RNA sequence: GGGAACGACUCGAGUAGAGUCGAAAAGAACAGGAUAACAGGACGCAAGAUAGGAAGUUCAGAUGAAUCGAGAAGAGCCGUAACUCGAUAACAACGGCAGCGUCCUGAAGAAUUUACGGCUCGAGAACAUGAGCACGUACUUCGGUACGUGCUCAUGAAAAGAAACAACAACAACAAC
Reactivity to DMS in 0.01 (KOAc 150mM, MgCl2 10mM, bicine 150mM(pH8.5), 24C), signal-to-noise 2, nucleotides 027 to 126: g050a060a140c100a170g020g040a090u070a120a200c000a000g000g030a080c010g030c000a100a040g040a220u050a030g060g000a130a180g000u000u030c170a180g030a060u000g010a150a060u010c000g010a050g040a170a070g020a010g000c050c000g020u000a000a100c030u000c080g010a060u030a140a050c110a050a100c050g030g000c130a120g000c000g000u000c000c000u000g000a050a060g110a080a050u040u010u000a000c000g000g020c030u000c000g050a090g000a050a140
Reactivity to 2A3 in 0.01 (KOAc 150mM, MgCl2 10mM, bicine 150mM(pH8.5), 24C), signal-to-noise 2, nucleotides 027 to 126: g040a090a070c090a070g030g040a010u030a120a000c020a000g000g000a000c000g040c000a010a100g080a300u090a090g160g110a210a050g020u090u080c050a010g030a120u150g040a000a080u000c000g000a000g020a180a000g000a070g060c000c000g000u000a000a080c040u000c000g000a000u070a060a000c110a110a110c030g210g000c020a000g000c000g000u000c000c000u040g000a000a000g010a000a010u190u270u280a000c000g000g000c000u000c000g090a100g000a020a000